This 177-nucleotide RNA was probed chemically with DMS and 2A3. The RNA was probed in 150 mM KOAc, 10 mM MgCl2 and 150 mM bicine (pH 8.5) at 24 C. Source: RMDB library OK1LIB, as collected in RNAgym. For 2A3, 3,110 sequencing reads were counted.
[RMDB]
RNA sequence: GGGAACGACUCGAGUAGAGUCGAAAAGCACGUUUUGCAUGCUAGGUAUGACCUGUGACGCGAAAGCGAACCACCGAAACAGGUCAUUUGCCGAGGUGGGAGGUGGGAAAGCAUGCUUUCGUGCGAAGGGUAAGGAAUGGUUCGCCAUUCCUUACCCAAAAGAAACAACAACAACAAC
Reactivity to DMS in 0.01 (KOAc 150mM, MgCl2 10mM, bicine 150mM(pH8.5), 24C), signal-to-noise 1, nucleotides 027 to 126: g000c000a000c000g110u030u000u010u010g060c000a030u000g030c040u000a070g010g000u070a050u000g000a000c030c000u010g000u000g010a120c080g000c060g000a080a000a160g010c010g000a170a010c050c170a010c160c020g000a180a200a020c010a010g040g000u030c070a000u000u030u000g040c000c030g000a140g000g000u100g000g000g000a190g000g130u070g000g000g000a050a110a000g000c000a000u000g000c000u000u030u000c000g010u000g000c000g000a060a040
Reactivity to 2A3 in 0.01 (KOAc 150mM, MgCl2 10mM, bicine 150mM(pH8.5), 24C), signal-to-noise 4, nucleotides 027 to 126: g000c000a000c000g010u010u010u130u200g000c000a000u000g000c000u010a010g000g000u200a010u040g010a010c010c000u000g000u010g010a020c030g020c020g070a100a020a010g040c050g040a060a080c030c030a080c060c080g070a070a090a000c020a010g000g010u020c000a000u010u010u090g010c000c000g010a100g010g070u300g040g030g060a170g070g120u300g010g010g030a050a090a000g000c000a000u000g000c000u000u030u000c000g000u000g000c000g000a040a050